RNA sequence: GGGAACGACUCGAGUAGAGUCGAAAAAAAAAGAAAGAAAUACGAAGAAACAGAAUUAUUUUCAUCCAGAUUGGUUUCCUUCGUAAGCUUACUCUUCUGGUCAUAAGAAAAUGUAUGUUUUGUAUUUUCAGAUAUGGAUGAAUGCAGCAUAAGGAACGUUGAUUCAUAAGUUCGCUUAUGAAUCAACAAAAGAAACAACAACAACAAC
Reactivity to 2A3 in 0.01 (KOAc 150mM, MgCl2 10mM, bicine 150mM(pH8.5), 24C), signal-to-noise 2, nucleotides 027 to 156: a000a000a000a000a000g070a020a050a000g000a010a150a020u030a030c010g020a030a050g000a030a020a000c010a040g180a180a020u150u020a060u090u160u070u070c020a020u020c020c030a030g030a110u040u080g030g000u040u010u030c030c000u020u000c020g000u030a000a030g030c000u010u010a010c010u030c030u070u000c050u060g090g000u110c050a040u050a160a090g050a010a050a030a020u080g000u040a040u040g020u060u080u080u050g020u010a100u050u010u010u090c030a000g000a110u050a020u140g070g040a010u030g000a000a050u060g000c010a050g010c010a040u110a170a060g080g020a080a020c090
Reactivity to DMS in 0.01 (KOAc 150mM, MgCl2 10mM, bicine 150mM(pH8.5), 24C), signal-to-noise 1, nucleotides 027 to 156: a050a020a120a030a170g010a090a110a070g000a080a050a130u000a040c010g000a080a070g010a050a030a070c020a110g020a120a090u000u000a060u010u000u010u000c050a100u010c030c030a080g000a110u000u000g010g020u010u000u000c040c000u020u000c040g020u000a040a050g010c070u000u010a060c020u010c030u000u000c000u000g010g000u000c110a160u000a080a090g010a060a030a060a050u010g030u010a030u010g000u000u030u010u000g010u000a050u000u000u000u000c010a100g020a110u000a090u000g030g020a090u010g020a020a030u010g020c030a060g010c020a070u010a110a140g030g010a050a090c150
Chemical mapping of a 207-nucleotide RNA with 2A3 and DMS. It was measured as part of the RMDB library OK3TST. The RNA was probed in 150 mM KOAc, 10 mM MgCl2 and 150 mM bicine (pH 8.5) at 24 C. DMS adducts were read by reverse transcription with MarathonRT. Values cover nucleotides 27 to 156.